[RMDB]
RNA sequence: GGGAACGACUCGAGUAGAGUCGAAAAGGAGAUCGAAGAAGACCGACGUCAGCACGGUCUGGAUGUAGGUCCGCAUGCAUCCAAGUUGACGAAACUUAACGAUUUCCAAAGCGGACAAGAAGUCAAACCUGCGCUAAUACUUCGGUAUUAGCGCAGGAAAAGAAACAACAACAACAAC
Reactivity to 2A3 in 0.01 (KOAc 150mM, MgCl2 10mM, bicine 150mM(pH8.5), 24C), signal-to-noise 1, nucleotides 027 to 126: g000g020a020g000a000u110c020g000a170a210g020a050a020g020a090c000c100g000a040c060g190u300c230a090g000c260a000c070g030g020u000c020u000g000g000a000u000g000u000a000g030g000u000c000c050g040c000a000u000g000c000a000u000c000c000a000a000g000u020u000g110a110c240g030a010a010a010c000u040u000a110a090c000g000a010u000u020u000c000c000a000a070a000g000c000g000g000a000c000a000a130g220a120a000g070u160c120a050a000a000